[RMDB]
RNA sequence: GGGAACGACUCGAGUAGAGUCGAAAAGAACCGCGAUUCGUCGCGGUUCGAGCGCCGUAGCGCGCAACGGCGUAACGGCAGCUUUAGCGCGCAGCUGCCGACGAUCGGGUGGUUUCGACCACCCGAAGACCUUUGCACUUUUCGAAGUGCAAAGGUCAAAAGAAACAACAACAACAAC
Reactivity to DMS in 0.01 (KOAc 150mM, MgCl2 10mM, bicine 150mM(pH8.5), 24C), signal-to-noise 1, nucleotides 027 to 126: g010a020a020c000c000g030c000g000a050u000u010c150g030u030c000g030c000g000g020u010u000c030g000a110g000c010g020c000c000g010u020a050g020c000g000c030g000c010a080a010c020g010g000c010g000u000a110a110c030g000g010c000a000g010c000u000u000u010a070g000c030g040c040g010c080a140g000c000u000g020c000c000g010a120c200g010a080u000c010g000g000g030u000g000g010u000u000u000c150g000a030c000c000a010c000c000c010g000a010a050
Reactivity to 2A3 in 0.01 (KOAc 150mM, MgCl2 10mM, bicine 150mM(pH8.5), 24C), signal-to-noise 1, nucleotides 027 to 126: g010a000a000c000c030g010c010g020a010u040u080c220g010u010c000g110c000g000g000u000u000c040g000a000g000c020g000c000c010g030u060a070g030c040g000c010g030c080a020a000c000g010g000c020g040u060a220a080c040g010g000c020a010g010c000u110u110u160a040g040c020g000c000g000c040a000g000c010u010g000c000c000g050a050c040g050a100u050c000g000g010g000u010g010g000u040u050u130c170g050a030c010c000a010c040c000c010g010a000a000